Chemical mapping of a 207-nucleotide RNA with 2A3.
Reactivities are given for positions 27 through 156.
Conditions: 150 mM KOAc, 10 mM MgCl2 and 150 mM bicine (pH 8.5), 24 C.
2A3 is a SHAPE reagent: it acylates the 2'-hydroxyl of flexible nucleotides of all four kinds.
It was measured as part of the RMDB library M2RFPK.
RNA sequence: GGGAACGACUCGAGUAGAGUCGAAAAGUAUUCAUUCUCCUUUCUCGAUAGAGAUUGGAGUCAUACAUCCCCAGAAACCAUUCCUUAUACCUUGAGUAUUGCUGAAUUCAGUUUAGCGUGCAUGCUCUUAAUGGGUGCACCUUCGGGUGCACCCAAAGUACGUCGAUAGUUUCGACUAUCGACGUACAAAAGAAACAACAACAACAAC
Reactivity to 2A3 in 0.01 (KOAc 150mM, MgCl2 10mM, bicine 150mM(pH8.5), 24C), signal-to-noise 1, nucleotides 027 to 156: g000u030a020u070u210c110a060u190u000c030u000c010c000u000u000u000c040u010c000g180a270u180a200g000a000g010a000u000u000g000g000a000g000u000c020a030u080a020c010a050u100c050c000c000c000a040g150a070a210a060c040c020a150u100u140c040c000u150u080a090u050a180c000c040u100u060g000a040g030u030a030u170u120g000c000u020g000a050a050u270u160c130a140g100u000u030u130a000g030c050g030u020g000c010a000u020g000c000u070c000u030u070a140a030u080g000g000g030u000g020c010a000c020c010u020u130c290g080g000g000u000g000c020a000c000c000c000a000a000a000